[RMDB]
RNA sequence: GGGAACGACUCGAGUAGAGUCGAAAAGAAAUUGUGAAAGAGUAAUGGAGUUCAAUAAUCUGCAUGAGAUAUCUAACGUUGAUGAAUUAUCUACGAACUUCACAAACACUAUAUCGAAUGCAGGAAAGGCAUUUGAUAUCUUCGGAUAUCAAAUGCCAAAAGAAACAACAACAACAAC
Reactivity to DMS in 0.01 (KOAc 150mM, MgCl2 10mM, bicine 150mM(pH8.5), 24C), signal-to-noise 2, nucleotides 027 to 126: g020a040a110a160u000u060g000u000g000a120a020a130g030a060g000u000a030a130u000g020g000a160g000u030u110c040a120a110u090a110a080u040c120u000g110c000a000u000g000a300g000a030u000a000u010c120u000a160a260c190g010u020u050g000a070u000g000a000a000u000u000a030u000c090u120a150c140g000a000a080c230u080u000c030a060c130a050a020a040c110a140c210u010a060u000a000u000c000g010a180a000u000g000c020a030g000g020a000a000a160
Reactivity to 2A3 in 0.01 (KOAc 150mM, MgCl2 10mM, bicine 150mM(pH8.5), 24C), signal-to-noise 2, nucleotides 027 to 126: g110a030a120a000u130u090g070u010g080a170a180a020g130a010g130u300a120a060u150g040g020a210g050u010u020c010a000a040u070a010a050u100c000u030g000c010a000u000g000a000g000a000u000a000u000c060u080a160a030c090g030u000u030g080a210u040g060a000a060u190u060a080u060c010u070a040c040g130a140a040c040u040u020c000a000c060a000a080a000c040a000c040u000a000u000a000u000c000g000a000a000u000g000c000a000g010g010a070a010a000